[RMDB]
RNA sequence: GGGAACGACUCGAGUAGAGUCGAAAAUGAGGGCUAACCUACGGAAAUUCCUGAGCUCCCCUGACGUCCAGGCCGUCCCCUCUCCGAGUGAAGGGAGACUCCGGGAUGUCGUGCAUGCUGGGGACGAUGACGGUAACGUUCGCGUUACCGAAAAGAAACAACAACAACAAC
Reactivity to 2A3 in 0.01 (KOAc 150mM, MgCl2 10mM, bicine 150mM(pH8.5), 24C), signal-to-noise 9, nucleotides 027 to 129: u170g020a040g020g040g030c140u130a140a160c020c020u060a110c040g090g050a050a060a070u080u020c010c010u030g030a030g020c030u010c000c000c000c010u030g010a020c000g010u000c000c010a010g020g000c030c040g020u000c000c000c000c000u040c010u000c020c020g110a110g090u300g060a030a020g020g010g010a160g000a020c010u000c010c010g000g000g000a000u010g000u000c020g010u080g050c040a090u170g020c040u080g000g010g020g000a000c020g040a060u140g080a020
Reactivity to DMS in 0.01 (KOAc 150mM, MgCl2 10mM, bicine 150mM(pH8.5), 24C), signal-to-noise 9, nucleotides 027 to 129: u060g020a010g010g000g030c130u050a090a110c000c000u000a090c040g030g010a060a090a210u000u000c000c000u030g030a110g020c120u000c010c010c010c020u010g000a030c000g040u010c010c010a040g010g010c110c180g000u000c020c010c010c030u000c120u010c020c010g010a150g010u080g020a060a020g010g010g010a100g010a000c030u020c030c000g000g000g000a010u010g000u000c020g000u050g010c100a050u060g000c110u020g000g000g000g000a030c040g020a080u050g020a150
This 170-nucleotide RNA was probed chemically with 2A3 and DMS.
DMS adducts were read by reverse transcription with MarathonRT.
It was measured as part of the RMDB library 15KLIB.
The DMS profile rests on 96,762 reads.